[RMDB]
RNA sequence: GGGAACGACUCGAGUAGAGUCGAAAAGACCUUAGAAUGAGAGAGACAUGCAAGACCAUGUCAAUAUAAACCUAAGGAAGGAUGUUCGUAUUAUCUAUGGUCAUCCAUAGAUUCUCAUUCCAUCCUAGAUAGUAUACAAUUUCGAUUGUGUGCUAUCAAAAGAAACAACAACAACAAC
Reactivity to DMS in 0.01 (KOAc 150mM, MgCl2 10mM, bicine 150mM(pH8.5), 24C), signal-to-noise 9, nucleotides 027 to 126: g000a150c000c010u000u010a010g000a070a070u010g000a100g000a040g010a300g000a020c010a000u000g000c110a120a130g010a190c300c000a010u000g000u000c000a040a090u010a030u010a040a080a100c180c010u010a030a030g000g010a150a080g000g000a020u000g010u010u020c180g020u030a030u000u000a030u000c010u000a000u000g000g000u030c280a160u050c020c000a000u000a000g000a020u000u000c010u000c040a090u010u020c180c040a030u000c000c010u010a130
Reactivity to 2A3 in 0.01 (KOAc 150mM, MgCl2 10mM, bicine 150mM(pH8.5), 24C), signal-to-noise 9, nucleotides 027 to 126: g080a030c010c000u030u020a060g030a130a090u230g020a060g010a010g010a000g000a090c000a000u010g020c140a240a070g040a090c080c000a000u000g010u000c000a000a000u070a000u020a020a100a030c020c030u030a040a020g050g020a030a030g010g000a040u020g030u080u100c090g030u160a040u050u020a000u030c000u000a000u000g010g040u170c090a110u180c040c000a000u000a000g000a000u020u000c010u000c000a030u080u010c020c000a010u000c000c000u010a040
Structure probing data (DMS and 2A3) for a 177-nucleotide construct. The data come from the RNA Mapping Database (RMDB), library OK1LIB. For 2A3 the reverse transcriptase was SuperScript II with manganese. As a SHAPE reagent, 2A3 marks flexible, mostly unpaired nucleotides at the ribose 2'-OH. DMS adducts were read by reverse transcription with MarathonRT. The DMS profile rests on 50,079 reads. The 2A3 profile rests on 81,953 reads.